Source: RMDB library OK3TST, as collected in RNAgym.
An RNA of 207 nucleotides, treated with 2A3 and read out base by base.
The reactions ran in a buffer of 150 mM KOAc, 10 mM MgCl2 and 150 mM bicine (pH 8.5), at 24 C.
[RMDB]
RNA sequence: GGGAACGACUCGAGUAGAGUCGAAAAACGCCGUCAACAAGCAGAUGACCGGUCUCAAGAACACGUUCAUCCGCGCGAACGACCGACAGGCCAAGACGCUGCUGCAGGCCGGCGGCGUUCCGUCGAUGCCCGUCUCGGCCGCGUGGGACACCGCCGGGAUGUACCGGAGUUUCGACUCCGGUACAUCAAAAGAAACAACAACAACAAC
Reactivity to 2A3 in 0.01 (KOAc 150mM, MgCl2 10mM, bicine 150mM(pH8.5), 24C), signal-to-noise 1, nucleotides 027 to 156: a000c120g030c120c010g090u130c010a080a120c000a160a000g000c020a010g040a120u030g040a090c050c080g000g060u050c060u050c060a100a060g070a130a050c170a010c170g000u050u070c030a110u030c070c120g050c040g020c050g020a010a000c030g050a030c030c060g000a050c070a080g000g000c000c000a070a010g050a080c060g000c040u030g040c050u050g020c040a030g100g000c020c000g030g000c010g000g020c020g010u000u010c000c000g070u090c000g030a130u080g000c030c000c040g300u050c150u080c070g010g030c010c030g010c000g020u060g000g030g000a020c020a000c070c000g000c000c010g020g110